Chemical mapping of a 207-nucleotide RNA with 2A3 and DMS.
For 2A3, 4,811 sequencing reads were counted.

RNA sequence: GGGAACGACUCGAGUAGAGUCGAAAAGGGGUCCUCCUUGUCAGUCCGUCAUUGGCUUUUGACGCUCUGAAGCCUCCACGGAGCGAUAAGCCAAGACGGACUUGGAUUUAGGAGGACGGAGGCACCCAAAAUCAUGCUGUCUUCGGACAGCAUGAAACUUCAUUUAUGAGUUCGCUCAUAAAUGAAGAAAAGAAACAACAACAACAAC
Reactivity to 2A3 in 0.01 (KOAc 150mM, MgCl2 10mM, bicine 150mM(pH8.5), 24C), signal-to-noise 4, nucleotides 027 to 156: g090g000g030g020u000c000c000u000c010c000u020u000g040u010c010a020g000u000c000c010g010u030c160a300u010u020g000g020c040u040u050u090u160g200a110c030g010c000u000c000u010g070a140a080g030c020c020u020c010c010a040c030g000g000a000g000c010g030a030u030a100a010g000c000c000a010a000g000a000c010g000g000a000c000u000u020g000g000a000u140u060u100a010g000g000a000g000g000a000c000g010g000a000g000g020c020a060c010c000c000a070a090a020a040u040c000a000u000g000c000u000g000u000c000u010u030c070g120g010a000c020a000g000c000a000u000g000a000a000a000
Reactivity to DMS in 0.01 (KOAc 150mM, MgCl2 10mM, bicine 150mM(pH8.5), 24C), signal-to-noise 1, nucleotides 027 to 156: g000g020g030g010u020c000c010u000c010c000u000u000g000u000c000a140g020u000c020c010g010u050c010a160u000u000g020g030c020u010u000u000u000g010a220c000g010c000u000c000u010g010a060a130g010c020c020u000c020c010a300c040g050g000a020g030c000g030a080u000a050a060g020c020c010a040a020g010a040c010g010g050a020c000u000u020g020g020a040u000u010u000a010g000g000a050g030g010a010c000g000g020a040g020g050c010a160c010c000c000a070a050a100a190u000c000a000u000g020c000u000g020u010c000u000u000c300g010g030a010c000a020g000c000a000u000g000a010a040a200